RNA sequence: GGGAACGACUCGAGUAGAGUCGAAAAGAUAUGGACUGAACUACAGCCAAUCAACGCGAAGAACUCGGAAACGAGGGAGCGUUGGAGCUGCAGUCCUAAGUCAAAGAGCAUUCUUCGGAAUGCUCAACAAGCUGUCUAACUUCGGUUAGACAGCUUGAAAAGAAACAACAACAACAAC
Reactivity to 2A3 in 0.01 (KOAc 150mM, MgCl2 10mM, bicine 150mM(pH8.5), 24C), signal-to-noise 1, nucleotides 027 to 126: g000a000u040a020u100g020g000a010c020u000g000a060a090c050u250a120c290a000g040c010c000a010a100u170c000a020a000c000g050c000g130a300a100g040a150a020c000u000c010g030g010a070a080a030c000g040a020g000g000g070a020g000c020g000u020u020g030g000a050g020c010u000g000c000a000g000u000c000c010u020a100a000g020u000c050a250a030a000g000a000g040c010a000u020u000c010u060u100c180g100g000a020a010u030g020c000u010c000a000a000
Reactivity to DMS in 0.01 (KOAc 150mM, MgCl2 10mM, bicine 150mM(pH8.5), 24C), signal-to-noise 1, nucleotides 027 to 126: g000a020u010a230u000g000g010a010c000u000g000a060a010c120u020a230c030a000g000c010c070a130a240u000c000a010a010c010g020c020g020a110a140g000a130a260c050u000c000g000g020a120a120a170c010g010a010g020g000g000a060g020c000g030u010u000g000g000a070g000c000u000g010c000a000g010u000c000c000u000a040a110g030u000c030a070a180a150g000a000g030c000a010u000u010c010u000u010c120g020g000a020a000u000g000c000u000c020a010a080